[RMDB]
RNA sequence: GGGAACGACUCGAGUAGAGUCGAAAAAGUGGCAGGCCGUACGCGGCCAGCCACAUGCAAGAGAAGAAGCGUUCAACCAAGCCGUGACAGGCAAGUCAGGGCUUCGGCGGGAAAUUGCUCUUACCAAAAAACCUCCUUUCCUUCGGGAAAGGAGGAAGAUAUAGUUCUAGUUCGCUAGAACUAUAUCAAAAGAAACAACAACAACAAC
Reactivity to 2A3 in 0.01 (KOAc 150mM, MgCl2 10mM, bicine 150mM(pH8.5), 24C), signal-to-noise 3, nucleotides 027 to 156: a000g000u010g020g000c040a040g030g000c000c020g030u050a030c300g000c020g070g000c010c030a000g010c000c000a000c000a000u050g050c020a050a130g050a060g020a150a010g030a060a010g020c010g010u020u010c020a030a020c010c000a000a000g000c030c010g210u010g010a000c020a060g110g240c050a070a020g000u010c000a020g060g050g000c000u040u100c160g030g000c040g060g100g020a010a050a000u130u180g000c000u000c000u020u050a110c020c020a070a070a020a010a020a060c000c000u010c000c010u000u000u010c010c000u010u080c190g070g000g000a010a000a000g000g020a000g000g000a000a000
Reactivity to DMS in 0.01 (KOAc 150mM, MgCl2 10mM, bicine 150mM(pH8.5), 24C), signal-to-noise 1, nucleotides 027 to 156: a150g010u000g000g020c000a010g010g020c010c000g030u010a070c280g010c040g030g130c000c040a020g000c020c020a000c020a030u010g010c030a090a040g000a140g020a070a060g020a040a060g040c070g030u000u010c030a070a060c000c000a010a070g000c010c010g010u000g020a050c010a170g030g000c300a100a140g010u000c000a080g030g030g020c020u020u000c090g030g010c090g010g010g020a000a120a060u000u010g030c000u000c010u000u000a260c040c060a010a030a080a060a050a100c000c000u010c000c000u000u020u000c010c020u000u010c300g040g020g030a000a000a010g010g000a000g000g010a000a000